[RMDB]
RNA sequence: GGGAACGACUCGAGUAGAGUCGAAAAGGCGGCUAGUUCGCUAGCCGCCAAAGUGCACAGUCGCCAGCCAAGUGCACAAAAUAAAAGAAAAGGUACGCGACAAAAGAGGGGCGUUCGCGCCCCUCAAUCAAUUAGGAGACUUCGGUCUCCUAAUUGAAAAAGAAACAACAACAACAAC
Reactivity to DMS in 0.01 (KOAc 150mM, MgCl2 10mM, bicine 150mM(pH8.5), 24C), signal-to-noise 1, nucleotides 027 to 126: g010g000c000g010g010c010u000a000g010u000u040c190g050c000u000a010g000c000c000g030c000c000a000a010a090g000u010g000c020a000c000a140g000u010c010g020c040c060a280g010c000c000a050a140g040u000g000c000a020c010a080a070a080a130u000a080a070a140a070g000a080a100a060a110g000g000u000a100c300g000c000g000a030c040a210a060a070a100g000a020g010g040g000g000c000g000u000u010c150g000c010g000c000c030c000c000u000c000a000a050

Structure probing data (DMS) for a 177-nucleotide construct. Source: RMDB library M2PK50, as collected in RNAgym. DMS adducts were read by reverse transcription with MarathonRT. The RNA was probed in 150 mM KOAc, 10 mM MgCl2 and 150 mM bicine (pH 8.5) at 24 C. Values cover nucleotides 27 to 126.